Structure probing data (DMS and 2A3) for a 177-nucleotide construct. For DMS, 13,394 sequencing reads were counted. Conditions: 150 mM KOAc, 10 mM MgCl2 and 150 mM bicine (pH 8.5), 24 C. High DMS reactivity at an A or C suggests that its Watson-Crick edge is free.
[RMDB]
RNA sequence: GGGAACGACUCGAGUAGAGUCGAAAAUUCCUUCCCCCGCGGCGACGCGUGCACACUAGAAGAAGGCGUGUGUUUGACCGCCGAGUCAUUGAACGGCGCCGCGUUCGCUUCGCGCGUAUGACUACUAUGCACCUAAUUAUUUCGAUAAUUAGGUGCAAAAAGAAACAACAACAACAAC
Reactivity to DMS in 0.01 (KOAc 150mM, MgCl2 10mM, bicine 150mM(pH8.5), 24C), signal-to-noise 8, nucleotides 027 to 126: u000u000c020c010u000u000c000c000c000c030c010g010c020g010g010c010g000a030c000g010c010g010u010g030c030a050c030a050c030u000a130g000a110a120g010a180a190g000g010c060g020u010g010u000g010u010u000u010g000a070c080c010g020c040c040g000a150g000u000c070a100u000u010g000a130a150c100g000g000c020g020c060c000g000c010g010u000u000c020g000c020u000u010c060g020c030g020c130g010u000a050u010g000a130c130u000a080c150u000a180
Reactivity to 2A3 in 0.01 (KOAc 150mM, MgCl2 10mM, bicine 150mM(pH8.5), 24C), signal-to-noise 3, nucleotides 027 to 126: u040u000c010c000u020u030c000c010c000c010c000g000c010g010g010c000g000a020c010g020c020g030u030g010c020a020c000a000c010u150a040g040a240a020g090a120a040g190g020c030g000u080g000u020g010u060u080u220g120a050c000c020g020c020c000g030a040g010u030c060a100u060u140g050a090a020c010g000g000c020g010c000c010g030c000g000u040u040c010g000c000u100u080c030g010c010g000c020g040u090a060u170g070a030c010u150a050c030u070a140